Notes:
An RNA of 207 nucleotides, treated with 2A3 and DMS and read out base by base. For 2A3 the reverse transcriptase was SuperScript II with manganese. The 2A3 profile rests on 1,150 reads. For DMS the reverse transcriptase was MarathonRT.

[RMDB]
RNA sequence: GGGAACGACUCGAGUAGAGUCGAAAAAACAACACUGAUCUAGUUUUGCUUCGUGGAUAUCUUGGAGACUUCAUGGGUCUUAGCUUUAUCGUUGAUUCUCACUUUGAGGCUGACAACGCUUUGAUCCUUGAAAAGAAAGUCAUUGGUGACAUCGCUGUAUUAUAGUCCCGUUCGCGGGACUAUAAUAAAAAGAAACAACAACAACAAC
Reactivity to 2A3 in 0.01 (KOAc 150mM, MgCl2 10mM, bicine 150mM(pH8.5), 24C), signal-to-noise 3, nucleotides 027 to 156: a000a010c090a030a020c060a020c080u130g050a080u060c060u160a050g050u020u000u050u050g040c010u040u060c050g070u030g020g020a050u030a040u200c060u050u120g050g040a030g010a050c020u030u000c030a040u040g010g000g020u010c000u000u000a000g020c010u110u090u140a130u210c040g080u010u010g030a130u210u020c000u000c020a110c120u150u100u220g030a000g000g000c020u040g010a000c030a030a010c020g000c000u050u010u020g000a010u020c020c010u000u010g010a020a020a000a020g050a020a090a000g010u030c030a040u030u090g030g010u030g040a030c010a060u080c090g030c040u040g010
Reactivity to DMS in 0.01 (KOAc 150mM, MgCl2 10mM, bicine 150mM(pH8.5), 24C), signal-to-noise 1, nucleotides 027 to 156: a070a050c020a060a030c050a090c040u010g020a130u000c050u010a130g020u000u010u000u010g000c050u000u010c040g010u010g000g010a100u010a040u000c060u000u000g030g020a170g010a100c160u010u000c030a020u010g020g020g000u000c020u000u000a030g020c010u000u000u000a050u000c060g020u000u000g000a150u020u000c020u000c000a140c160u010u000u010g010a020g000g000c040u000g010a060c000a020a040c070g000c040u020u000u000g010a030u010c010c000u000u000g000a020a070a060a130g000a080a060a090g000u000c030a090u010u000g030g000u010g030a090c070a080u010c040g020c090u000g020